[RMDB]
RNA sequence: GGGAACGACUCGAGUAGAGUCGAAAAACGGAUCGACGACGUUCUCGGCACCGUCCGAAAGUUCGUGAGCGACAACAGAUCCGUGCUGGCUGCCGAUGUCAACAACCUCGCCGACGCGACCACUACAGCGUAGAACCACUUUCGAGUGGUUCUACGCAAAAGAAACAACAACAACAAC
Reactivity to 2A3 in 0.01 (KOAc 150mM, MgCl2 10mM, bicine 150mM(pH8.5), 24C), signal-to-noise 3, nucleotides 027 to 126: a000c000g020g000a030u000c000g030a030c030g000a010c000g060u080u080c060u010c000g020g000c040a140c100c080g150u180c030c020g160a160a050a020g050u070u060c040g010u080g030a060g020c000g110a100c020a160a030c030a040g020a010u000c000c000g020u000g000c040u040g010g000c010u020g010c040c010g050a040u040g030u030c020a020a050c020a020a070c070c010u010c000g010c020c000g030a060c050g020c030g050a090c000c060a020c040u190a070c070a060
Reactivity to DMS in 0.01 (KOAc 150mM, MgCl2 10mM, bicine 150mM(pH8.5), 24C), signal-to-noise 1, nucleotides 027 to 126: a050c010g000g000a000u000c000g180a130c120g030a050c000g000u000u020c050u000c060g030g000c060a040c170c210g000u000c100c270g040a020a020a220g070u000u210c070g000u000g000a050g090c050g000a050c120a010a160c050a090g000a000u000c000c000g000u000g000c050u000g000g000c000u000g000c090c000g000a170u000g000u010c030a000a000c210a190a240c030c020u030c000g000c020c010g000a090c000g000c000g150a140c020c000a010c060u000a190c050a140